RNA sequence: GGGAACGACUCGAGUAGAGUCGAAAAAGACACGCCAGAAGAAAUUACCAAGGAUGCCUGCGGCUCAGCGGCCUUCCUUCGCAUAGUCGCGGACACUGUUAAAAGUGGACUUUUAGCAGCUGUGAAGGCCCUACGUAUCAUUCGUGAUACGUAGGGCAAAAGAAACAACAACAACAAC
Reactivity to DMS in 0.01 (KOAc 150mM, MgCl2 10mM, bicine 150mM(pH8.5), 24C), signal-to-noise 1, nucleotides 027 to 126: a020g000a100c050a040c070g000c000c000a050g000a090a070g000a110a000a040u030u000a160c040c050a080a090g000g000a140u000g010c000c000u000g000c050g000g020c000u020c110a140g020c080g000g030c180c030u000u040c040c000u030u010c000g050c000a050u030a060g020u000c080g010c000g010g050a080c010a030c000u010g050u000u000a000a000a080a000g060u040g040g000a140c010u000u000u000u010a070g000c000a000g030c110u040g020u000g000a140a170g000
Reactivity to 2A3 in 0.01 (KOAc 150mM, MgCl2 10mM, bicine 150mM(pH8.5), 24C), signal-to-noise 4, nucleotides 027 to 126: a000g100a020c030a000c040g020c010c020a030g070a080a010g060a000a250a040u210u110a070c030c050a060a040g140g010a040u100g050c010c020u040g040c010g040g000c000u020c080a030g020c020g010g030c010c040u030u030c010c000u030u060c000g000c010a000u020a060g020u020c010g000c000g040g010a010c010a000c000u030g010u050u030a020a000a000a000g090u260g210g130a270c010u000u020u010u000a010g000c030a030g000c130u020g000u040g070a070a050g110